[RMDB]
RNA sequence: GGGAACGACUCGAGUAGAGUCGAAAAUGAAGUCUGGUUGGAUUUGUCACAUCAUGCCUGUUGCCUAGCACUGCCACAGAUGUCCUUAUCUCACAACAAAAGACUGCAUAGGUGGAGGUUAAUGCUCAACGCUGCAUUUAUUCGUAAAUGCAGCGUUAAAAGAAACAACAACAACAAC
Reactivity to 2A3 in 0.01 (KOAc 150mM, MgCl2 10mM, bicine 150mM(pH8.5), 24C), signal-to-noise 4, nucleotides 027 to 126: u090g020a030a020g070u000c040u070g000g050u060u010g030g030a080u040u050u100g110u080c030a020c000a080u070c000a020u080g030c030c010u090g040u100u040g020c010c000u040a000g040c010a010c030u020g000c020c000a030c010a000g040a030u070g030u030c010c010u060u100a070u020c040u010c020a080c030a130a000c020a000a160a040a020g080a050c020u050g000c020a040u050a100g020g020u030g030g020a020g010g050u100u150a070a040u150g030c000u000c040
Reactivity to DMS in 0.01 (KOAc 150mM, MgCl2 10mM, bicine 150mM(pH8.5), 24C), signal-to-noise 5, nucleotides 027 to 126: u010g000a080a060g000u000c010u010g010g030u000u000g010g000a090u020u000u010g020u000c050a030c030a040u010c040a060u010g000c060c010u000g000u030u000g010c020c040u010a090g020c030a050c020u000g000c080c040a060c070a080g000a050u010g000u020c070c020u010u010a050u010c030u010c080a090c060a060a070c150a070a090a080a070g020a050c030u010g010c060a060u010a070g000g010u000g010g010a060g000g000u000u010a050a080u010g010c070u000c100